Source information:
The record gives the reactivity of an RNA of 207 nucleotides to 2A3 and DMS. For DMS, 3,209 sequencing reads were counted.
[RMDB]
RNA sequence: GGGAACGACUCGAGUAGAGUCGAAAAAUGAGAUCCCAUAUUGCACACUGUGCUAAUUUGAGAUUCUCAUGCCUCCUACUUGGAGAGAUCUGGACUAGAAGUCAGGGCAUCUGACUCUGCCAGCCACAAAACGUACAAGGCUUCGGCCUUGUACGAAGCACCGUAAUAAGUUCGCUUAUUACGGUGCAAAAGAAACAACAACAACAAC
Reactivity to 2A3 in 0.01 (KOAc 150mM, MgCl2 10mM, bicine 150mM(pH8.5), 24C), signal-to-noise 6, nucleotides 027 to 156: a020u000g000a010g000a000u000c000c010c010a000u030a000u010u020g020c000a010c030a050c230u300g010u010g030c060u100a030a050u020u020u020g030a040g000a010u240u060c000u000c000a020u050g030c010c010u000c010c000u130a250c110u090u160g030g010a030g010a020g040a120u030c000u010g010g030a080c050u110a120g030a140a000g090u010c010a010g050g070g200c100a150u120c100u010g000a000c000u000c000u000g000c000c000a020g030c020c000a110c040a030a140a100a030c010g000u000a000c000a000a000g000g000c000u030u120c190g050g000c000c010u000u010g000u010a000c000g000a000a000
Reactivity to DMS in 0.01 (KOAc 150mM, MgCl2 10mM, bicine 150mM(pH8.5), 24C), signal-to-noise 2, nucleotides 027 to 156: a030u000g000a040g000a030u000c000c010c000a030u010a000u000u000g000c000a020c000a240c130u000g020u000g050c020u020a010a070u000u000u000g030a020g000a000u000u000c020u000c010a000u000g010c050c030u000c020c010u000a050c160u010u010g040g010a100g010a210g000a100u000c030u000g000g020a110c060u010a040g000a120a050g020u000c010a030g010g030g040c250a160u020c000u000g000a030c010u000c010u030g040c040c010a030g050c020c020a170c090a110a050a180a220c040g010u000a030c000a030a060g050g000c030u000u000c300g030g040c010c000u000u000g010u000a010c000g000a020a090
Source: RMDB library M2RFPK, as collected in RNAgym.